[RMDB]
RNA sequence: GGGAACGACUCGAGUAGAGUCGAAAAGGUUGCCUUCGGGCAACCCUAGCGGGGUCAUUCGAUGAGGGUUGGAGGCUUUGAUCCUGAAGCCUCCACGGGGGAGCCUCACAACCCGAGAAUGACGGAGGCACCCCUCUCCAACCAUUUCGAUGGUUAAUCUACAUAUAGGUUUCGACCUAUAUGUAGAAAAAGAAACAACAACAACAAC
Reactivity to 2A3 in 0.01 (KOAc 150mM, MgCl2 10mM, bicine 150mM(pH8.5), 24C), signal-to-noise 2, nucleotides 027 to 156: g000g010u020u030g010c030c040u060u090c300g020g000g000c000a000a000c000c000c000u060a060g050c090g020g010g030g030u020c010a000u030u000c040g200a240u180g100a230g020g000g000u050u080g010g010a000g020g000c000u280u180u050g080a110u190c000c000u040g030a080a040g010c010c010u010c000c020a020c010g000g000g000g010g000a000g000c020c000u010c020a300c000a070a000c020c060c000g000a020g020a000a010u020g010a020c030g010g010a000g020g010c010a040c000c000c010c000u040c020u030c010c010a040a000c000c000a030u070u140u130c200g120a020u060g040g000u050u120a090a130
Reactivity to DMS in 0.01 (KOAc 150mM, MgCl2 10mM, bicine 150mM(pH8.5), 24C), signal-to-noise 1, nucleotides 027 to 156: g040g000u010u020g030c000c010u000u000c300g100g000g010c010a000a010c000c010c000u020a040g040c080g000g030g060g010u000c010a050u000u000c020g040a280u000g000a140g010g010g010u020u000g000g020a070g010g010c030u000u030u010g010a030u010c010c020u010g000a100a090g000c010c040u000c010c040a070c050g000g010g010g000g000a060g040c000c020u010c010a100c070a060a040c010c010c010g000a160g010a020a030u000g010a060c070g020g050a060g080g030c010a080c040c010c010c000u000c000u010c010c010a080a060c020c010a060u000u000u010c250g010a130u000g040g020u030u000a080a190

Annotation:
An RNA of 207 nucleotides, treated with 2A3 and DMS and read out base by base. For 2A3 the reverse transcriptase was SuperScript II with manganese. It was measured as part of the RMDB library RNAMAK. The reactions ran in a buffer of 150 mM KOAc, 10 mM MgCl2 and 150 mM bicine (pH 8.5), at 24 C. The 2A3 profile rests on 1,605 reads.